[RMDB]
RNA sequence: GGGAACGACUCGAGUAGAGUCGAAAACGAGCAUGACCCCCGAGCAGCACGCCGCCAAGAUUCGUGAACUGGAAGCGCCUAUGGCUGCGGCCUAUCUGGCGGAAGUUCGUGCUGUCGAAUCUGCGGCAACCGUUGCUGAGGUUGAGCGGCUUAUUGCCAUUUACAACUUAUUCGUAAGUUGUAAAUGAAAAGAAACAACAACAACAAC
Reactivity to 2A3 in 0.01 (KOAc 150mM, MgCl2 10mM, bicine 150mM(pH8.5), 24C), signal-to-noise 6, nucleotides 027 to 156: c040g010a010g040c090a130u170g050a210c010c000c000c020c030g020a020g010c000a000g000c010a010c050g000c010c000g000c020c060a080a030g000a010u030u040c030g030u090g080a060a030c010u040g090g110a110a060g120c010g000c000c030u120a090u120g010g000c020u060g010c060g060g010c010c000u090a100u160c080u050g010g000c000g010g040a040a000g030u030u040c020g020u070g090c070u060g030u000c000g000a000a020u000c010u030g000c000g020g000c010a010a020c030c030g040u050u050g020c020u020g030a060g050g020u050u110g020a020g040c030g040g000c040u120u090a090u100u300g020c010
Reactivity to DMS in 0.01 (KOAc 150mM, MgCl2 10mM, bicine 150mM(pH8.5), 24C), signal-to-noise 4, nucleotides 027 to 156: c030g000a100g030c030a090u000g000a170c020c010c010c010c040g000a150g010c010a040g000c010a090c080g020c000c020g000c020c030a120a080g000a070u000u000c020g020u000g010a040a120c040u000g000g010a160a210g020c020g020c020c020u000a150u000g020g030c010u000g050c220g050g030c020c010u000a080u010c080u000g000g010c000g020g000a080a060g020u000u000c010g020u000g030c050u000g020u010c020g010a050a060u000c030u000g000c010g020g020c010a050a030c050c030g020u000u000g020c010u000g000a060g000g010u000u010g000a130g010c040g010g010c030u000u000a060u010u000g010c040